[RMDB]
RNA sequence: GGGAACGACUCGAGUAGAGUCGAAAAAGCUCAUCGCAUAACGCUGGUAAGCUCUCUUUUGGUAAAGAACGUAAUUCAUCUGGUGUAUUUGCCAAAGCCAGAAUUGGGUAUUUUGAAAUAUCUAAUGCAAAGACCAUGCAUUCGUGCAUGGUCUUUGAAAAGAAACAACAACAACAAC
Reactivity to 2A3 in 0.01 (KOAc 150mM, MgCl2 10mM, bicine 150mM(pH8.5), 24C), signal-to-noise 3, nucleotides 027 to 126: a010g060c070u070c050a100u060c040g010c040a040u140a220a080c160g000c020u050g000g000u090a070a040g020c020u000c000u000c010u010u070u100u060g100g020u100a060a060a050g110a110a000c060g040u130a110a240u230u190c120a120u000c080u050g120g000u050g050u190a150u020u090u040g020c010c000a000a000a000g000c000c000a060g000a060a040u000u000g000g020g040u010a020u020u070u050u160g050a100a050a000u050a000u020c000u040a020a020u070g030
Reactivity to DMS in 0.01 (KOAc 150mM, MgCl2 10mM, bicine 150mM(pH8.5), 24C), signal-to-noise 2, nucleotides 027 to 126: a080g000c020u010c050a010u030c040g020c050a180u030a040a200c210g000c010u040g000g010u000a040a070g010c010u000c020u000c020u010u000u010u000g000g000u010a080a060a060g020a050a090c090g040u040a080a080u030u060c100a110u020c070u020g020g000u010g000u070a050u020u010u030g020c010c030a020a080a120g000c010c040a050g020a090a040u010u000g000g000g010u000a000u000u000u020u020g000a030a010a000u010a020u020c010u000a000a000u010g020

This 177-nucleotide RNA was probed chemically with 2A3 and DMS. For DMS, 3,218 sequencing reads were counted. DMS adducts were read by reverse transcription with MarathonRT.